Structure probing data (DMS and 2A3) for a 177-nucleotide construct. For DMS, 2,504 sequencing reads were counted.
RNA sequence: GGGAACGACUCGAGUAGAGUCGAAAAAUGGCCGCGGGUCUGGACGUGGUGCUGGGCGACCAGCAGGUCAAGAGCGUGUUCGUCAACGUCUUCGGUGGCAUCACCUCGUGCGAUGCGGUGGCGACCGGACAGAACCAAUCUUCGGAUUGGUUCUGUCAAAAGAAACAACAACAACAAC
Reactivity to DMS in 0.01 (KOAc 150mM, MgCl2 10mM, bicine 150mM(pH8.5), 24C), signal-to-noise 2, nucleotides 027 to 126: a100u000g010g000c010c020g000c070g020g030g020u010c050u000g000g000a040c090g010u010g020g010u010g020c020u010g020g010g020c280g010a180c010c000a040g030c030a040g010g010u010c080a080a100g010a080g020c120g020u000g000u010u000c120g020u010c060a080a040c070g000u010c100u010u000c050g010g020u000g000g000c050a040u010c020a030c010c030u010c120g020u000g020c060g000a080u000g020c050g000g010u000g000g020c000g000a090c030c030g000
Reactivity to 2A3 in 0.01 (KOAc 150mM, MgCl2 10mM, bicine 150mM(pH8.5), 24C), signal-to-noise 1, nucleotides 027 to 126: a000u090g040g000c020c010g000c000g030g000g000u000c050u070g050g000a010c030g030u090g000g080u050g080c010u010g030g040g020c050g010a030c020c000a000g030c040a020g080g030u080c040a090a020g010a000g120c050g020u050g010u060u100c050g040u010c020a040a020c020g090u020c100u150u080c070g080g000u010g030g000c030a050u090c000a010c000c010u070c050g060u110g060c040g040a080u050g010c030g070g030u020g000g020c000g030a010c020c020g020